[RMDB]
Structure probing data (2A3 and DMS) for a 177-nucleotide construct. It was measured as part of the RMDB library OK1LIB. DMS adducts were read by reverse transcription with MarathonRT.
RNA sequence: GGGAACGACUCGAGUAGAGUCGAAAAAUGUUACGGUGGUGUAUGAGAUUCAAUCACUGGAGGAGCUGAUAGUUAAGAAGUACUCAGACGGCCUAAAGGGACUAAAUGCCCUUGGUACACUUCCACGACCCUACUUGCGUUUCGACGCAAGUAGGGUAAAAGAAACAACAACAACAAC
Reactivity to 2A3 in 0.01 (KOAc 150mM, MgCl2 10mM, bicine 150mM(pH8.5), 24C), signal-to-noise 2, nucleotides 027 to 126: a020u240g010u070u090a000c090g060g020u100g030g010u030g030u080a060u140g030a100g010a080u070u190c140a120a130u000c000a000c080u060g000g000a040g010g020a030g040c120u080g060a140u030a140g110u060u000a120a030g020a140a030g040u060a030c000u000c060a000g090a080c040g020g000c000c000u160a150a050a070g050g000g020a050c050u140a000a210a300u190g020c000c000c030u010u050g000g000u100a030c010a000c030u010u010c000c070a100c040g090
Reactivity to DMS in 0.01 (KOAc 150mM, MgCl2 10mM, bicine 150mM(pH8.5), 24C), signal-to-noise 1, nucleotides 027 to 126: a020u020g000u050u010a000c050g000g020u000g010g050u010g000u010a010u000g000a080g010a160u000u030c090a170a190u060c090a010c020u010g060g000a030g010g000a040g000c050u000g000a200u000a050g020u010u030a020a010g000a050a070g010u000a060c080u010c020a000g030a090c140g020g000c010c000u000a020a090a100g000g000g010a020c070u030a070a030a090u020g000c040c000c020u000u000g000g000u010a030c060a050c090u000u000c050c040a050c300g000